[RMDB]
RNA sequence: GGGAACGACUCGAGUAGAGUCGAAAAGCAAAGAAAUUUUAUCCCAAUAAGGCGAAGUAAGCAAGUCGACCCAACGCGAGGGCGCUAGCGAGCUUACGAGCCCUAGCAGACUAAUAGCCAGAAAAAAUACCCUUAAAAUCUUCGGAUUUUAAGGGUAAAAAGAAACAACAACAACAAC
Reactivity to DMS in 0.01 (KOAc 150mM, MgCl2 10mM, bicine 150mM(pH8.5), 24C), signal-to-noise 1, nucleotides 027 to 126: g030c120a020a060a150g020a100a120a110u000u010u000u000a100u000c010c000c000a180a130u000a120a050g010g000c000g050a060a200g000u000a030a030g000c050a060a160g020u000c060g010a150c000c010c000a100a070c030g000c180g010a100g000g000g000c000g010c130u000a060g030c050g040a230g000c030u000u030a020c030g000a300g000c000c000c000u040a070g030c130a090g000a010c050u040a060a020u000a180g010c040c040a140g050a030a000a040a090a100a220